[RMDB]
RNA sequence: GGGAACGACUCGAGUAGAGUCGAAAACGUGUUCGAAGUGGAUACCCGAAUUAAGCAUAAUCCCAUCUGAACGGUGUAUGCCAAUCAAUUGUCGUCACUCAGAAGGACAGUAGCCUGGCCGUAGCUCACUCACACUUAGGUUCGCCUAAGUGUGAGUAAAAGAAACAACAACAACAAC
Reactivity to 2A3 in 0.01 (KOAc 150mM, MgCl2 10mM, bicine 150mM(pH8.5), 24C), signal-to-noise 8, nucleotides 027 to 126: c030g050u040g050u080u040c080g060a160a060g060u070g050g030a050u090a130c000c000c020g010a040a050u130u130a160a010g010c020a020u070a110a050u100c010c020c000a040u040c040u090g070a090a040c040g020g000u050g010u050a030u080g100c020c020a030a070u120c030a040a130u100u070g040u050c020g010u000c010a030c060u040c030a080g020a120a030g080g000a040c040a020g040u070a010g020c000c020u030g030g000c000c020g040u010a010g010c000u010c030
Reactivity to DMS in 0.01 (KOAc 150mM, MgCl2 10mM, bicine 150mM(pH8.5), 24C), signal-to-noise 5, nucleotides 027 to 126: c080g020u010g000u000u000c020g040a060a090g010u020g010g000a110u010a040c050c010c000g000a100a050u030u020a070a090g020c140a080u000a120a090u000c020c010c000a100u020c080u010g000a050a100c170g020g000u010g000u020a030u020g000c000c020a060a110u000c090a090a100u010u010g010u010c030g010u010c040a110c070u030c090a090g020a090a100g000g000a030c030a030g020u000a080g010c080c040u000g000g010c010c030g030u020a050g010c040u020c090
The record gives the reactivity of an RNA of 177 nucleotides to 2A3 and DMS. It was measured as part of the RMDB library OK1LIB. For 2A3 the reverse transcriptase was SuperScript II with manganese. High DMS reactivity at an A or C suggests that its Watson-Crick edge is free. The reactions ran in a buffer of 150 mM KOAc, 10 mM MgCl2 and 150 mM bicine (pH 8.5), at 24 C.